[RMDB]
RNA sequence: GGGAACGACUCGAGUAGAGUCGAAAAUCUUCAUCAUCGUCAAUCAGGCUGAAGGCUCCUGCUCCCACCGAUGUACAAAAUACUCUGGGCUGAACCACUGCAAGCAGCAACUUGUUCUGGCUGAAUGGUCGAAGGACACAUUCGUGUGUCCUUCGACAAAAGAAACAACAACAACAAC
Reactivity to DMS in 0.01 (KOAc 150mM, MgCl2 10mM, bicine 150mM(pH8.5), 24C), signal-to-noise 1, nucleotides 027 to 126: u000c000u000u000c050a060u000c060a000u000c010g040u000c110a070a110u000c040a040g040g000c040u000g010a110a190g040g000c030u000c010c030u010g030c060u000c050c000c040a100c070c060g090a060u010g000u000a080c080a120a020a080a200u000a040c090u000c020u000g040g000g010c060u060g030a050a040c070c040a020c030u010g010c010a040a060g060c010a010g010c080a010a130c070u000u000g000u000u000c040u010g010g040c050u020g090a140a190u000g010
Structure probing data (DMS) for a 177-nucleotide construct. It was measured as part of the RMDB library OK2TST. The reactions ran in a buffer of 150 mM KOAc, 10 mM MgCl2 and 150 mM bicine (pH 8.5), at 24 C. For DMS the reverse transcriptase was MarathonRT.